[RMDB]
RNA sequence: GGGAACGACUCGAGUAGAGUCGAAAACACACCUUCGAGAGUGCAUCCUGACUCACCGUCGGCGCCACCGGUUAGCCUGGCGAGAUGACCCCGCAGGCACGCCCAGCGCGCAGGGCCGAUGUCCGCGGCAGUGCUAUUCCUUCGGGAAUAGCACUGCAAAAGAAACAACAACAACAAC
Reactivity to DMS in 0.01 (KOAc 150mM, MgCl2 10mM, bicine 150mM(pH8.5), 24C), signal-to-noise 1, nucleotides 027 to 126: c090a160c270a070c010c000u000u020c050g030a160g030a160g000u000g030c010a010u020c030c000u000g000a060c000u000c060a020c000c070g000u010c070g010g030c010g000c000c070a110c140c060g000g000u030u060a190g030c050c040u010g000g000c070g000a060g000a180u010g000a130c080c060c000c010g030c000a020g000g060c020a020c080g000c000c000c010a040g000c030g000c040g000c060a070g000g000g000c090c020g000a010u000g010u000c020c000g020c060g000
Reactivity to 2A3 in 0.01 (KOAc 150mM, MgCl2 10mM, bicine 150mM(pH8.5), 24C), signal-to-noise 3, nucleotides 027 to 126: c050a010c010a010c010c000u090u120c060g100a110g000a010g050u050g050c030a050u040c010c040u060g030a070c020u020c050a060c000c030g060u050c010g050g010c030g020c000c020a070c060c010g060g000u100u070a040g020c000c010u030g070g000c050g020a030g020a040u030g060a060c000c010c000c020g030c020a030g050g020c020a010c020g020c000c020c010a060g020c040g000c020g010c090a040g020g010g000c000c030g120a120u070g030u020c020c040g000c020g040
Structure probing data (DMS and 2A3) for a 177-nucleotide construct. The reactions ran in a buffer of 150 mM KOAc, 10 mM MgCl2 and 150 mM bicine (pH 8.5), at 24 C. It was measured as part of the RMDB library OK1LIB.